Structure probing data (2A3 and DMS) for a 207-nucleotide construct.
The RNA was probed in 150 mM KOAc, 10 mM MgCl2 and 150 mM bicine (pH 8.5) at 24 C.
RNA sequence: GGGAACGACUCGAGUAGAGUCGAAAAGGAUGACUUCGGUCAUCCAAAAAGCGUACUACUUUCAAUGAUGUACCGAAAGGCGCGAAACAGCUCCCAAAUAGGAGCUGGAGCCUAGGUAUUGAGAAAGUAUCGCAAAAAAGACUGGUUCGCCAGUCAACUUAUGUGUAGUCUUCGGACUACACAUAAGAAAAGAAACAACAACAACAAC
Reactivity to 2A3 in 0.01 (KOAc 150mM, MgCl2 10mM, bicine 150mM(pH8.5), 24C), signal-to-noise 1, nucleotides 027 to 156: g010g000a020u010g000a010c010u070u080c250g080g000u000c000a000u000c000c010a120a000a000a000a000g050c050g020u070a080c030u000a010c010u080u000u000c040a150a300u120g040a060u060g070u020a010c000c000g150a300a190a050g000g010c040g020c070g130a050a120a040c000a000g000c000u020c000c030c010a190a300a080u230a070g000g000a000g000c000u030g020g010a020g000c000c000u030a030g000g010u000a000u020u070g010a020g000a020a000a000g000u000a010u170c030g000c000a080a080a000a000a000a040g000a000c000u000g000g040u030u040c170g030c050c000a000g000u000c000a000a020
Reactivity to DMS in 0.01 (KOAc 150mM, MgCl2 10mM, bicine 150mM(pH8.5), 24C), signal-to-noise 2, nucleotides 027 to 156: g010g020a000u000g000a030c000u030u000c300g050g010u000c000a000u010c010c000a000a070a030a060a050g000c020g030u000a080c110u000a010c010u000u020u000c010a090a110u010g000a140u000g000u000a010c020c000g000a100a210a120g020g030c000g030c080g040a170a110a200c000a020g010c000u000c000c010c010a060a150a260u000a020g000g000a010g020c000u020g020g000a170g000c020c010u000a120g000g020u000a000u000u000g000a040g000a040a030a030g010u000a010u000c000g030c020a000a050a070a160a090a110g020a010c000u020g000g020u000u010c290g030c010c010a020g000u000c000a000a060
For DMS the reverse transcriptase was MarathonRT.